[RMDB]
RNA sequence: GGGAACGACUCGAGUAGAGUCGAAAAUCACAUCAGCGCGACUACGCUCUCGCUGCCUAAGCGACGGCUAGUCUGUCAGACCGGGAACGCCCUCGGCCCGGACCCUGGCAUCAGCUAGAGGGAUCCACCGAUGAGUCCGGUCGCGGGACUCCUCGGGCACUUACGCAGUCUUCGGACUGCGUAAGUGAAAAGAAACAACAACAACAAC
Reactivity to 2A3 in 0.01 (KOAc 150mM, MgCl2 10mM, bicine 150mM(pH8.5), 24C), signal-to-noise 2, nucleotides 027 to 156: u090c030a040c050a130u140c120a080g080c060g010c020g130a020c010u020a040c160g000c000u000c000u000c010g000c000u020g000c020c070u120a060a000g010c010g020a010c010g000g030c010u000a020g060u000c020u010g000u000c000a010g000a040c000c000g020g000g000a020a020c020g000c000c000c000u010c010g000g000c010c000c000g030g000a040c130c020c000u020g000g010c010a100u100c030a120g120c070u230a070g000a000g000g000g000a010u080c050c020a020c000c020g000a010u020g000a000g000u000c030c030g050g100u150c100g080c110g160g010g000a010c000u000c000c000u000c010g010g000g000
This 207-nucleotide RNA was probed chemically with 2A3. The RNA was probed in 150 mM KOAc, 10 mM MgCl2 and 150 mM bicine (pH 8.5) at 24 C. The 2A3 profile rests on 1,204 reads. Reactivities are given for positions 27 through 156.